[RMDB]
RNA sequence: GGGAACGACUCGAGUAGAGUCGAAAAGAAUACAAGAAACUCAUUGAAGAUAACUUAUCUUACAUAUGGUGUCAGAUAGUUUUAAGGUUGGAGGUCCUAGGAACCUCGGCUAAGGCUGUGUACGACGCUUAGGUAAGACGUUCGCGUCUUACCUAAGAAAAGAAACAACAACAACAAC
Reactivity to 2A3 in 0.01 (KOAc 150mM, MgCl2 10mM, bicine 150mM(pH8.5), 24C), signal-to-noise 1, nucleotides 027 to 126: g020a010a060u130a050c090a020a050g040a160a080a020c020u020c070a050u090u130g070a050a030g040a080u060a140a120c020u100u150a040u030c010u020u080a050c020a020u240a070u300g130g050u020g020u020c020a020g050a110u040a020g000u000u010u030u110a160a050g050g040u010u180g110g030a000g020g020u000c060c090u130a100g020g090a070a030c010c010u000c000g020g010c010u040a100a000g030g000c020u050g010u010g010u100a050c060g010a000c000g010
Reactivity to DMS in 0.01 (KOAc 150mM, MgCl2 10mM, bicine 150mM(pH8.5), 24C), signal-to-noise 4, nucleotides 027 to 126: g000a140a100u020a090c110a080a150g000a100a130a080c070u010c040a050u000u000g000a070a050g000a030u000a070a130c180u010u010a090u000c010u000u010a070c050a070u010a060u010g000g000u000g020u000c040a110g000a080u000a020g020u000u000u010u000a080a140g010g000u010u010g040g050a010g010g000u000c030c080u020a100g020g000a060a040c010c000u000c010g000g020c010u000a050a070g000g020c010u000g010u000g010u000a110c100g010a070c130g030
An RNA of 177 nucleotides, treated with 2A3 and DMS and read out base by base. The data come from the RNA Mapping Database (RMDB), library OK2TST. For DMS the reverse transcriptase was MarathonRT.